[RMDB]
RNA sequence: GGGAACGACUCGAGUAGAGUCGAAAAGAUAUGGACACAGCAACAGCCUAUGUUCGGAAACGAACAGUAGGACAUGCUGGUCCUAAGUCAAAACUAGUCCGUCUGUCUUCGGACAGACGGACUAGAAUCAACCUUCUGUCUUCGGACAGAAGGUUGAAAAAGAAACAACAACAACAAC
Reactivity to DMS in 0.01 (KOAc 150mM, MgCl2 10mM, bicine 150mM(pH8.5), 24C), signal-to-noise 1, nucleotides 027 to 126: g000a070u000a300u000g010g000a000c000a090c030a000g040c010a040a130c300a140g010c000c000u020a030u000g000u000u000c000g020g000a150a020a170c000g010a000a000c010a030g090u000a000g040g030a110c040a200u000g030c000u010g000g000u010c000c000u020a020a150g010u000c010a090a060a140a170c010u000a010g020u000c000c000g000u000c000u020g000u000c000u000u000c270g010g000a020c020a000g030a000c020g000g000a000c000u000a000g000a030a070
Notes
Conditions: 150 mM KOAc, 10 mM MgCl2 and 150 mM bicine (pH 8.5), 24 C. Chemical mapping of a 177-nucleotide RNA with DMS. Values are in units of 0.01, from 0 to 300, in steps of 10. For DMS, 664 sequencing reads were counted. DMS adducts were read by reverse transcription with MarathonRT. Values cover nucleotides 27 to 126.